Source information:
The record gives the reactivity of an RNA of 207 nucleotides to 2A3 and DMS. As a SHAPE reagent, 2A3 marks flexible, mostly unpaired nucleotides at the ribose 2'-OH. For DMS, 3,074 sequencing reads were counted. The data come from the RNA Mapping Database (RMDB), library M2RFPK. In probing experiments dimethyl sulfate is read out at A N1 and C N3, which are open when not base-paired.
RNA sequence: GGGAACGACUCGAGUAGAGUCGAAAAACCUUAUUUUGAGAAGCUGAGGGAUUUGGCCCAUAGAAGCUUCAGCAACCGACUUUAAAUAGCACGGUGCUAAUACCGACGAGCAACUCGAAUGAUAAGUAAAACGUUGACAAGUUCGCUUGUCAACGAAUCAUCAUACUGAGUUCGCUCAGUAUGAUGAAAAAGAAACAACAACAACAAC
Reactivity to 2A3 in 0.01 (KOAc 150mM, MgCl2 10mM, bicine 150mM(pH8.5), 24C), signal-to-noise 3, nucleotides 027 to 156: a000c060c020u100u110a150u050u080u050u080g100a030g000a010a000g000c010u030g010a040g080g030g000a060u100u110u190g080g000c030c010c000a050u080a100g130a110a020g020c000u040u030c000a000g000c000a010a030c010c000g040a020c020u080u070u190a170a210a210u160a110g010c010a010c070g000g000u000g000c010u000a070a020u030a040c020c010g050a050c060g030a060g030c030a050a050c030u020c020g050a030a060u050g090a050u040a120a000g050u110a030a120a030a060c020g000u000u000g010a000c010a000a000g010u020u060c140g030c120u010u000g000u020c000a000a000c000g000a000a020
Reactivity to DMS in 0.01 (KOAc 150mM, MgCl2 10mM, bicine 150mM(pH8.5), 24C), signal-to-noise 2, nucleotides 027 to 156: a110c030c010u000u010a060u000u000u000u000g010a030g000a060a300g010c010u000g010a090g000g000g010a150u000u010u000g000g020c030c010c030a100u000a190g020a180a030g020c020u010u000c030a040g000c000a070a030c030c000g000a100c000u000u000u010a070a230a120u000a010g020c030a010c050g010g000u000g020c000u000a080a080u020a040c010c000g010a150c060g010a190g020c010a060a290c010u000c020g010a050a070u010g000a130u020a050a090g030u010a070a070a080a150c010g020u000u000g000a010c010a010a040g000u000u020c300g000c030u000u000g000u000c000a000a010c010g010a020a050